[RMDB]
RNA sequence: GGGAACGACUCGAGUAGAGUCGAAAAGAAAGAAAGAAAGACAGUAGUAGGACAGGGGGCCGUUUCUACUGUCAGAGAUGCUGCCACUCGUCUCACAGUGAACCGGUCUCUUUUCCUGCUAUUCAAACACCCCAGUGAGUUUCGACUCACUGGGGUGAAAAGAAACAACAACAACAAC
Reactivity to DMS in 0.01 (KOAc 150mM, MgCl2 10mM, bicine 150mM(pH8.5), 24C), signal-to-noise 1, nucleotides 027 to 126: g020a070a130a150g000a070a040a090g000a080a130a030g000a250c260a060g010u000a050g000u010a020g000g000a040c030a060g000g000g000g040g020c000c000g000u000u000u000c000u060a000c000u040g000u000c160a040g000a000g010a000u000g070c180u030g010c070c040a090c020u000c010g010u000c000u000c000a170c000a000g020u000g020a000a050c030c040g000g000u000c000u000c000u000u000u000u000c010c000u000g020c060u000a000u000u000c120a110a110a180
Reactivity to 2A3 in 0.01 (KOAc 150mM, MgCl2 10mM, bicine 150mM(pH8.5), 24C), signal-to-noise 2, nucleotides 027 to 126: g060a020a020a020g170a060a080a000g100a020a050a000g060a010c050a020g020u010a000g000u010a000g000g000a040c050a040g010g010g000g000g000c000c010g000u000u000u000c060u090a060c010u010g030u030c030a000g010a000g000a000u030g010c070u100g150c030c030a050c040u050c020g010u020c000u000c010a020c000a000g000u010g000a010a000c010c000g050g000u000c000u010c000u010u010u000u000c010c000u000g000c000u000a000u000u010c000a000a030a010

The record gives the reactivity of an RNA of 177 nucleotides to DMS and 2A3. It was measured as part of the RMDB library RFM100. 2A3 adducts were read by reverse transcription with SuperScript II with manganese. Conditions: 150 mM KOAc, 10 mM MgCl2 and 150 mM bicine (pH 8.5), 24 C.